[RMDB]
RNA sequence: GGGAACGACUCGAGUAGAGUCGAAAAGAAUAACUUUUUUCGCAUAUAGUUUUCUGCGAAUAGUUGAAAGGAAUCACACUUACCCAAGAUCGAGCAAUGUCGAGGUAAGUUGGAGAUUAUAAGUAAAGUAAUAGUAUUUUUUCGAAAAUACUAUUACAAAAGAAACAACAACAACAAC
Reactivity to DMS in 0.01 (KOAc 150mM, MgCl2 10mM, bicine 150mM(pH8.5), 24C), signal-to-noise 7, nucleotides 027 to 126: g000a180a100u030a040a050c010u000u010u000u000u010u010c000g020c000a020u010a120u020a130g000u020u030u010u010c090u000g010c010g010a010a010u010a030g000u000u010g000a090a090a120g010g000a040a020u000c000a090c030a020c010u000u000a010c000c010c130a070a190g000a080u010c120g010a080g020c210a110a060u040g010u000c020g000a110g010g000u000a000a020g000u020u010g010g010a140g000a020u000u000a060u010a030a090g010u020a080a060a140
Reactivity to 2A3 in 0.01 (KOAc 150mM, MgCl2 10mM, bicine 150mM(pH8.5), 24C), signal-to-noise 7, nucleotides 027 to 126: g050a030a120u220a060a050c040u150u110u050u010u030u040c010g000c030a020u110a060u050a180g120u120u190u050u100c060u010g000c000g010a010a010u030a040g030u020u040g090a110a060a070g130g050a020a010u010c000a010c000a000c020u000u000a000c010c010c020a060a070g020a070u120c070g030a010g190c090a200a130u230g030u080c010g030a030g020g000u010a000a000g010u050u030g030g000a120g010a060u040u040a100u080a170a020g040u040a070a120a030